[RMDB]
An RNA of 177 nucleotides, treated with DMS and read out base by base. Source: RMDB library RFMREP, as collected in RNAgym. High DMS reactivity at an A or C suggests that its Watson-Crick edge is free. Values cover nucleotides 27 to 126.

RNA sequence: GGGAACGACUCGAGUAGAGUCGAAAAGUUAGAGCAAUAAUUCUAGUAUCCGAAUUAGUCUUAUCCCUUGGCUCGCUCUAACGUUAUUACUCCCUAAUACUCCCUUUAACCGCAUCCCCCUGGUGCGCUAUCACUAGGCGUUCGCGCCUAGUGAUAGAAAAGAAACAACAACAACAAC
Reactivity to DMS in 0.01 (KOAc 150mM, MgCl2 10mM, bicine 150mM(pH8.5), 24C), signal-to-noise 1, nucleotides 027 to 126: g010u000u000a030g020a030g030c000a260a180u000a030a010u010u000c010u000a300g000u010a120u000c190c120g010a090a010u000u000a030g000u000c040u010u010a090u010c060c020c020u010u010g010g010c020u000c150g040c000u000c000u000a000a020c000g000u010u010a030u000u000a220c130u000c020c000c000u030a010a040u020a110c030u000c010c030c050u000u010u010a130a110c160c030g000c070a060u010c010c050c040c020c030u000g010g000u020g030c090g000